[RMDB]
RNA sequence: GGGAACGACUCGAGUAGAGUCGAAAACAUGCGAGGCUAUACGGAUGGGAAAGCAUGCUCGCCGCACUACAUCAACGGAUGGGAAAGCAUGCUAGCAUGCGAAAGGAUGGAGCAGGCCAUCAAGUUGCGUAGAGCGUCGUCGGCAACCGGCAUGCGAACGACCAUAUAGUUUCGACUAUAUGGUCGUAAAAGAAACAACAACAACAAC
Reactivity to 2A3 in 0.01 (KOAc 150mM, MgCl2 10mM, bicine 150mM(pH8.5), 24C), signal-to-noise 5, nucleotides 027 to 156: c030a010u090g000c020g020a020g030g000c030u080a050u030a170c070g080g010a070u060g040g030g000a100a000a010g030c010a000u030g010c030u030c050g000c010c020g020c010a040c020u130a050c010a080u120c030a150a090c040g130g020a040u070g020g000g040a060a110a020g050c010a010u070g000c010u000a020g050c010a010u050g030c000g070a110a020a020g080g010a010u070g010g010a040g040c050a040g060g000c010c000a020u030c040a050a100g040u080u070g020c040g030u060a010g000a010g070c040g050u080c030g020u020c030g030g000c000a040a050c030c010g000g010c020a000u040g010c020g030a040
Reactivity to DMS in 0.01 (KOAc 150mM, MgCl2 10mM, bicine 150mM(pH8.5), 24C), signal-to-noise 3, nucleotides 027 to 156: c040a070u000g010c050g010a130g020g010c050u000a100u010a110c080g000g040a040u010g000g010g000a100a090a140g020c010a040u000g000c020u010c050g020c030c060g000c020a260c060u010a080c030a050u000c020a090a060c070g020g000a110u000g000g020g000a110a090a150g000c010a020u000g020c030u000a100g020c020a060u010g010c000g000a110a090a150g010g020a080u000g000g000a140g050c070a100g020g010c020c000a030u010c030a060a050g020u000u000g000c080g000u000a080g000a150g020c050g010u000c020g000u010c020g010g010c020a070a100c070c020g000g000c000a070u000g020c030g010a120